This 207-nucleotide RNA was probed chemically with DMS and 2A3.
RNA sequence: GGGAACGACUCGAGUAGAGUCGAAAAAAAAAUGCCAGCUAAGUUACGUCUGUAUGUACAGGCGCGUCAGAGGUUGGCUAGAGCGUGACUGGUUGAGUUCCUGGGGAAGCCUGGGUGAUUAACAGUCAUAUAGUAAACUCACUGUUCGCAGUGAGAAGUCUAAUCAUUGAUUCGUCAAUGAUUAGACAAAAGAAACAACAACAACAAC
Reactivity to DMS in 0.01 (KOAc 150mM, MgCl2 10mM, bicine 150mM(pH8.5), 24C), signal-to-noise 2, nucleotides 027 to 156: a010a010a010a030a030u010g020c000c000a030g020c000u000a060a260g010u000u000a030c000g000u000c000u000g020u000a140u010g040u020a080c000a000g000g020c000g010c030g000u000c070a110g010a280g000g010u000u000g000g020c010u000a040g000a120g030c110g030u000g010a050c010u000g020g000u000u010g010a130g010u000u000c000c000u000g010g010g020g000a200a190g020c020c010u000g000g030g020u000g000a080u000u000a030a070c020a040g010u040c010a030u000a070u010a120g000u000a070a080a150c020u000c000a030c000u010g010u000u010c300g020c000a040g000u000g010a010g000a030a090
Reactivity to 2A3 in 0.01 (KOAc 150mM, MgCl2 10mM, bicine 150mM(pH8.5), 24C), signal-to-noise 6, nucleotides 027 to 156: a000a000a000a000a010u100g000c010c000a010g000c010u040a040a020g070u110u110a030c000g000u010c010u010g040u090a180u190g170u220a040c000a000g010g000c010g010c040g060u050c020a060g040a040g150g030u010u010g000g000c000u020a020g000a010g120c110g010u010g000a000c010u060g090g080u070u040g010a040g020u140u090c000c000u010g010g000g000g020a120a070g070c000c000u020g020g000g000u080g030a080u040u060a030a010c000a000g000u020c020a000u020a000u010a030g130u120a030a080a060c010u000c000a000c000u010g040u060u040c170g000c110a000g000u000g000a000g010a010a000
Notes: The reactions ran in a buffer of 150 mM KOAc, 10 mM MgCl2 and 150 mM bicine (pH 8.5), at 24 C.